Structure probing data (2A3 and DMS) for a 177-nucleotide construct. Source: RMDB library OK2TST, as collected in RNAgym. For DMS the reverse transcriptase was MarathonRT. Reactivities are given for positions 27 through 126. For DMS, 941 sequencing reads were counted. Conditions: 150 mM KOAc, 10 mM MgCl2 and 150 mM bicine (pH 8.5), 24 C.
[RMDB]
RNA sequence: GGGAACGACUCGAGUAGAGUCGAAAAGCUACUUGCCGGUAAUGACCUACUGCGACAACCAGGCUCUGCGCGAAGAGAUGUAUCGUGCUUACAGCACCCGCGCUUCCGAUCAAGGCCCGAACGCCGGGUUCCGUGGAGUAUUCGUACUCCACGGAACAAAAGAAACAACAACAACAAC
Reactivity to 2A3 in 0.01 (KOAc 150mM, MgCl2 10mM, bicine 150mM(pH8.5), 24C), signal-to-noise 1, nucleotides 027 to 126: g010c040u010a010c020u140u130g010c000c020g010g040u130a100a120u120g090a040c030c010u000a000c000u070g040c030g020a060c020a100a040c020c010a030g080g000c030u010c020u080g000c040g000c010g010a030a030g050a010g050a090u090g070u080a070u150c030g020u030g020c000u060u050a080c080a080g000c010a020c000c010c050g030c010g010c010u020u020c010c000g010a050u120c060a050a000g050g000c000c000c060g040a060a020c040g000c010c000g100g020
Reactivity to DMS in 0.01 (KOAc 150mM, MgCl2 10mM, bicine 150mM(pH8.5), 24C), signal-to-noise 2, nucleotides 027 to 126: g030c040u010a130c170u000u000g020c010c010g000g000u000a090a100u010g000a120c100c050u000a140c050u000g030c050g010a100c100a070a070c050c080a100g030g010c010u000c010u000g020c050g020c010g020a040a070g000a170g000a080u000g000u000a070u000c100g030u000g000c010u000u010a050c190a110g020c050a040c020c100c030g020c050g020c040u000u000c010c030g000a070u000c110a090a090g020g010c020c020c050g040a050a050c200g040c020c070g000g000